Structure probing data (DMS and 2A3) for a 177-nucleotide construct.
2A3 adducts were read by reverse transcription with SuperScript II with manganese.
Values are in units of 0.01, from 0 to 300, in steps of 10.
For 2A3, 15,177 sequencing reads were counted.
DMS adducts were read by reverse transcription with MarathonRT.
It was measured as part of the RMDB library OK2TST.
RNA sequence: GGGAACGACUCGAGUAGAGUCGAAAAUCAACCAAUUCAUCUACUGAUUUGCAGUUGAAAAUGACAUUAGUCAUGAAUUGAUGCUUUGGUUUAAAGAAUUUCUCGUAGCAGUCUCUUAAAUCCGACAGCAUAUGUUAUAUUUCGAUAUAACAUAUGCAAAAGAAACAACAACAACAAC
Reactivity to DMS in 0.01 (KOAc 150mM, MgCl2 10mM, bicine 150mM(pH8.5), 24C), signal-to-noise 9, nucleotides 027 to 126: u000c080a050a020c020c010a010a020u000u000c000a030u000c020u010a060c020u000g000a270u000u010u010g020c030a030g000u010u000g000a060a090a120a040u000g010a030c020a190u000u000a090g030u000c170a010u000g010a070a090u000u000g000a050u000g010c090u000u000u000g000g000u000u000u000a050a070a130g010a070a080u000u000u000c010u000c030g010u010a060g030c090a070g000u000c030u000c040u010u000a040a080a120u000c070c040g010a100c220a140
Reactivity to 2A3 in 0.01 (KOAc 150mM, MgCl2 10mM, bicine 150mM(pH8.5), 24C), signal-to-noise 9, nucleotides 027 to 126: u040c000a000a000c010c000a000a000u010u010c000a010u000c010u060a020c010u020g060a160u130u140u300g210c020a010g010u080u070g120a080a070a020a030u020g000a010c030a060u150u290a100g010u010c000a010u010g040a040a070u090u090g000a010u020g010c020u030u010u010g050g000u030u060u100a060a140a020g040a040a050u030u080u020c020u000c030g020u040a020g020c070a030g080u000c020u020c000u170u250a110a130a110u050c050c030g060a040c060a020